[RMDB]
RNA sequence: GGGAACGACUCGAGUAGAGUCGAAAACCGAAGCCCCAUUGAGGGAUAAUACAGGCUCUCCCAUCCAACUCCUAUUCCAACACGUUCUCGUCGUACAGAGUGGUAACAUGUGUCACCACAUAUCCAACAUAGUGUCGCAUCUUCGGAUGCGACACAACGUGUUUUAAGUGUUCGCACUUAAAACACGAAAAGAAACAACAACAACAAC
Reactivity to 2A3 in 0.01 (KOAc 150mM, MgCl2 10mM, bicine 150mM(pH8.5), 24C), signal-to-noise 4, nucleotides 027 to 156: c010c000g030a110a040g100c000c010c000c040a050u090u140g050a210g040g020g020a010u070a070a050u120a120c110a030g060g000c010u010c000u010c020c010c000a030u040c020c010a040a030c020u010c030c020u020a070u080u060c030c010a050a000c020a040c080g000u040u010c020u010c020g100u020c020g020u070a060c040a030g090a030g090u050g040g030u060a080a030c040a100u160g110u060g030u110c010a000c060c000a020c030a060u040a050u050c040c030a030a050c020a170u110a090g000u000g010u000c000g000c010a000u000c000u040u040c140g100g000a000u000g000c000g000a000c000a000c000a000a000
Reactivity to DMS in 0.01 (KOAc 150mM, MgCl2 10mM, bicine 150mM(pH8.5), 24C), signal-to-noise 2, nucleotides 027 to 156: c030c020g010a140a190g020c040c000c040c020a300u000u010g000a180g010g000g010a070u000a030a070u000a170c070a100g030g000c030u000c010u010c010c020c020a150u000c040c060a050a140c040u000c000c000u000a130u000u000c000c040a060a080c070a110c050g000u000u020c020u000c010g030u010c060g030u010a130c070a090g000a140g070u010g000g000u010a020a030c020a150u020g050u000g000u010c010a050c010c010a040c020a130u010a030u000c030c010a030a090c120a110u000a090g010u000g000u000c000g000c000a000u000c010u000u000c200g000g030a000u000g000c000g020a010c020a010c000a020a070